This 177-nucleotide RNA was probed chemically with 2A3 and DMS. 2A3 adducts were read by reverse transcription with SuperScript II with manganese. DMS adducts were read by reverse transcription with MarathonRT. Conditions: 150 mM KOAc, 10 mM MgCl2 and 150 mM bicine (pH 8.5), 24 C.
RNA sequence: GGGAACGACUCGAGUAGAGUCGAAAAGGUAACCACGCGCACUUCACCAAUGGUGGAGUCGUAGACCCCAUGGAACCGCAGCCAGAUGACAAACAGCAGGGCUGCGUAACCUAAGGUGAGGAGGUGGAGGCUAUUCAUUGUUCGCAAUGAAUAGCCUAAAAGAAACAACAACAACAAC
Reactivity to 2A3 in 0.01 (KOAc 150mM, MgCl2 10mM, bicine 150mM(pH8.5), 24C), signal-to-noise 4, nucleotides 027 to 126: g100g040u080a030a070c010c020a030c060g050c000g000c020a020c010u010u000c000a000c000c020a160a260u300g030g020u020g040g020a010g000u000c000g000u000a030g080a080c030c000c010c010a050u080g000g010a010a030c050c000g000c000a000g020c010c000a110g070a250u120g010a130c150a130a260a040c050a080g090c040a020g030g040g000c000u010g000c000g000u000a000a010c000c000u020a030a100g040g000u020g010a020g040g030a050g020g010u050g000g030
Reactivity to DMS in 0.01 (KOAc 150mM, MgCl2 10mM, bicine 150mM(pH8.5), 24C), signal-to-noise 4, nucleotides 027 to 126: g000g020u040a060a180c030c010a080c020g020c060g000c160a020c010u000u000c000a010c030c010a160a140u010g020g050u000g000g000a010g000u020c010g000u010a200g020a130c040c000c010c020a120u020g020g000a050a220c300c010g000c000a020g000c000c000a080g020a090u000g000a140c300a080a100a160c140a050g000c140a100g000g000g010c000u000g000c020g000u040a020a210c010c000u010a270a200g000g000u000g000a300g020g030a070g000g000u010g000g000